[RMDB]
RNA sequence: GGGAACGACUCGAGUAGAGUCGAAAAUAAAAGGCUUAGUGGCUCCCAGUUAGGAUUUAGUAUAUCUUUUGAUUUCAUGGUGCCUCAAGCAGAUCACCUGCCAUGGGUCAGGGGGUGGGCAAUAUAACGUUUAAAUUGAAUUCGUUCAAUUUAAACGAAAAGAAACAACAACAACAAC
Reactivity to DMS in 0.01 (KOAc 150mM, MgCl2 10mM, bicine 150mM(pH8.5), 24C), signal-to-noise 7, nucleotides 027 to 126: u010a090a100a140a130g000g010c040u000u000a090g020u000g010g010c020u000c040c010c020a100g010u000u000a050g010g000a090u010u010u010a090g010u000a090u010a070u000c010u000u000u000u000g010a150u000u000u010c060a060u000g010g010u010g010c050c020u010c060a060a090g000c060a070g000a120u010c140a070c070c020u000g010c040c050a080u000g000g000g010u000c100a040g010g000g000g000g010u010g000g010g010c060a060a060u010a070u000a070a140
Reactivity to 2A3 in 0.01 (KOAc 150mM, MgCl2 10mM, bicine 150mM(pH8.5), 24C), signal-to-noise 6, nucleotides 027 to 126: u080a000a080a010a010g060g000c020u040u080a030g020u050g040g000c010u020c020c020c010a040g030u030u070a040g020g060a040u070u070u120a070g050u070a090u040a060u300c040u060u150u060u120g100a080u060u080u080c060a040u070g020g000u040g010c000c010u030c030a020a010g000c030a000g040a110u100c040a030c040c020u050g040c030c000a050u060g030g000g040u050c030a040g020g020g000g010g050u210g010g000g000c010a040a000u150a030u030a240a020
Conditions: 150 mM KOAc, 10 mM MgCl2 and 150 mM bicine (pH 8.5), 24 C.
The record gives the reactivity of an RNA of 177 nucleotides to DMS and 2A3.
In probing experiments dimethyl sulfate is read out at A N1 and C N3, which are open when not base-paired.
It was measured as part of the RMDB library OK2TRN.
For DMS, 10,779 sequencing reads were counted.
2A3 is a SHAPE reagent: it acylates the 2'-hydroxyl of flexible nucleotides of all four kinds.